Chemical mapping of a 207-nucleotide RNA with DMS and 2A3. The RNA was probed in 150 mM KOAc, 10 mM MgCl2 and 150 mM bicine (pH 8.5) at 24 C. The data come from the RNA Mapping Database (RMDB), library OK3TST. The 2A3 profile rests on 4,326 reads.
[RMDB]
RNA sequence: GGGAACGACUCGAGUAGAGUCGAAAAGGGUACGGUGUCAUCUUCGCCGCGAUUCUGUCUCUGGCAGCUCCGUUGAUCGGCCUGCUUACGUCAGCUCUGUUGACGAUCCCUGGACUGAUCGCGGCGGUUGCCACUCCGAUAGCGGCCCUGACACUCGUGUUCCUUAUGCAUUCGUGCAUAAGGAACAAAAAGAAACAACAACAACAAC
Reactivity to DMS in 0.01 (KOAc 150mM, MgCl2 10mM, bicine 150mM(pH8.5), 24C), signal-to-noise 1, nucleotides 027 to 156: g010g040g000u010a090c040g010g000u000g010u030c040a060u000c110u020u020c090g000c020c000g010c030g020a130u000u000c040u020g010u020c040u010c080u000g030g000c000a070g000c000u000c020c030g020u000u010g020a040u000c020g030g060c300c010u000g040c030u000u000a110c010g010u000c020a010g020c090u000c090u020g040u000u000g000a030c000g020a070u010c030c080c100u000g000g000a050c000u000g010a030u000c030g020c000g040g010c060g010g000u000u020g010c040c030a030c000u010c050c040g010a070u010a080g030c040g020g030c030c090c080u000g000a040c030a040c030u000c090g000
Reactivity to 2A3 in 0.01 (KOAc 150mM, MgCl2 10mM, bicine 150mM(pH8.5), 24C), signal-to-noise 5, nucleotides 027 to 156: g110g040g020u130a030c030g000g000u010g000u000c030a080u060c100u220u200c070g000c010c010g000c010g020a040u150u050c020u020g030u030c030u020c030u160g000g000c010a000g010c010u000c020c010g020u110u300g010a030u060c000g000g010c010c000u060g010c060u070u120a110c010g010u000c000a010g010c020u050c070u300g060u060u020g010a000c020g050a080u070c040c010c030u030g010g040a190c000u010g010a010u000c000g000c010g000g010c020g000g000u010u000g000c000c000a000c000u000c000c020g010a000u010a020g020c010g000g000c000c000c000u000g010a010c000a010c030u080c020g030